This 207-nucleotide RNA was probed chemically with DMS and 2A3. The reactions ran in a buffer of 150 mM KOAc, 10 mM MgCl2 and 150 mM bicine (pH 8.5), at 24 C. For DMS the reverse transcriptase was MarathonRT.
[RMDB]
RNA sequence: GGGAACGACUCGAGUAGAGUCGAAAAAUGCUGAUGACCGUGGGGAUUCUGGUUGCUUGUAACCAGGCUGGGGAUGCUGCAUCCAGGCUGGAGGGAUGGAGACAACAGGGCAAGCAACGCACCCAUUGGUUCACACAGCUUGGUCUUGAGCUGUGGAGCCUAUGCGAUAUUUCGAUAUCGCAUAGGCAAAAGAAACAACAACAACAAC
Reactivity to DMS in 0.01 (KOAc 150mM, MgCl2 10mM, bicine 150mM(pH8.5), 24C), signal-to-noise 1, nucleotides 027 to 156: a080u010g020c030u000g010a100u000g010a050c010c050g040u010g000g000g000g000a170u020u010c140u010g020g060u010u000g020c040u020u020g000u000a130a160c060c050a070g000g020c010u000g020g040g080g020a140u000g050c120u010g010c070a100u000c010c000a100g010g050c010u020g040g020a170g010g010g000a140u000g040g020a070g020a110c150a060a090c060a150g050g030g020c000a030a060g010c030a030a010c000g030c050a080c010c000c020a300u000u000g010g000u060u020c050a100c010a000c000a010g050c000u000u000g000g000u000c140u000u010g000a190g000c020u010g060u000g000g000a130
Reactivity to 2A3 in 0.01 (KOAc 150mM, MgCl2 10mM, bicine 150mM(pH8.5), 24C), signal-to-noise 3, nucleotides 027 to 156: a000u160g020c050u030g030a190u140g020a050c010c020g020u010g000g040g000g020a180u210u110c080u230g130g000u020u000g000c000u010u030g020u010a050a120c010c000a010g060g030c010u030g010g010g020g040a070u190g030c100u100g000c030a000u010c000c000a000g080g050c010u010g000g020a120g100g010g010a060u080g140g050a040g010a090c020a060a050c060a060g000g020g030c020a000a000g000c000a000a000c000g020c060a030c030c000c000a010u040u300g030g000u060u050c010a010c000a000c000a040g000c000u000u030g030g010u050c030u110u140g040a010g010c010u000g000u000g010g040a000